[RMDB]
This 170-nucleotide RNA was probed chemically with DMS and 2A3. The DMS profile rests on 108,732 reads. Values are in units of 0.01, from 0 to 300, in steps of 10. It was measured as part of the RMDB library 15KLIB.

RNA sequence: GGGAACGACUCGAGUAGAGUCGAAAAAUCAUAUACAGCUAAUGAUGUCGAAGUCCAAUCAUCUGGCAUGAUUAAGCCAAAUGCUCUUCUUUGUGCUACUUGCCCCUUUGCUAAGGGUGAUAGCUGUCGCCACCGUAGUUCGCUACGGUGAAAAGAAACAACAACAACAAC
Reactivity to DMS in 0.01 (KOAc 150mM, MgCl2 10mM, bicine 150mM(pH8.5), 24C), signal-to-noise 9, nucleotides 027 to 129: a030u020c050a040u040a080u030a060c090a030g000c010u000a090a050u020g020a050u030g000u020c060g010a060a040g040u040c060c080a080a030u030c030a000u010c070u010g010g020c030a030u040g020a080u040u020a100a120g010c040c010a010a040a050u030g020c100u000c040u020u000c020u020u020u030g000u030g010c010u010a070c180u010u010g000c020c010c010c020u000u000u030g030c160u030a110a070g000g000g000u030g020a050u020a000g010c000u010g000u030c140g040c120
Reactivity to 2A3 in 0.01 (KOAc 150mM, MgCl2 10mM, bicine 150mM(pH8.5), 24C), signal-to-noise 9, nucleotides 027 to 129: a000u030c020a010u090a010u030a080c020a010g020c020u050a080a040u080g090a020u060g060u090c060g100a080a020g060u040c080c060a030a070u140c010a040u020c040u060g030g000c020a020u040g030a110u200u090a090a010g010c000c010a020a040a030u080g010c020u010c000u080u030c010u030u050u060g060u090g040c010u020a050c070u030u080g010c000c000c000c000u040u070u150g070c080u110a030a040g020g000g000u020g030a030u030a020g010c020u020g050u050c030g030c050